[RMDB]
RNA sequence: GGGAACGACUCGAGUAGAGUCGAAAAUAGCUAUGUUAUAAUAAUAUUAGCCCUGAGCUAUGAAUGAAUCGGAAUGUAGCGCAGCUUGGUAGCGCGUUCGCUUGGGGUGCGAGAGGUCGUCGGUUCACCAUGAGAAUAUUUUCGAAUAUUCUCAUGGAAAAGAAACAACAACAACAAC
Reactivity to DMS in 0.01 (KOAc 150mM, MgCl2 10mM, bicine 150mM(pH8.5), 24C), signal-to-noise 7, nucleotides 027 to 126: u000a060g000c010u000a050u010g000u000u010a100u000a140a130u000a060a080u010a300u010u000a170g010c010c030c060u000g000a050g010c010u000a060u010g010a090a090u000g000a060a050u000c050g010g000a060a050u000g020u000a060g000c010g020c030a060g010c060u000u000g020g020u010a080g020c020g020c190g000u000u010c040g000c030u000u000g010g010g000g020u000g010c040g000a050g010a100g010g000u000c030g010u010c010g010g010u000u010c050a180
Reactivity to 2A3 in 0.01 (KOAc 150mM, MgCl2 10mM, bicine 150mM(pH8.5), 24C), signal-to-noise 5, nucleotides 027 to 126: u060a010g000c010u030a060u150g020u140u080a190u050a300a160u130a170a040u110a110u200u090a040g010c020c000c030u030g030a010g000c020u050a030u160g060a090a060u080g010a030a040u080c010g030g040a060a060u120g040u120a030g000c010g000c030a080g040c070u130u140g190g020u180a020g000c010g000c010g030u040u010c020g000c010u010u030g040g000g000g000u010g010c020g010a090g000a010g000g080u050c010g010u010c020g010g000u010u030c040a030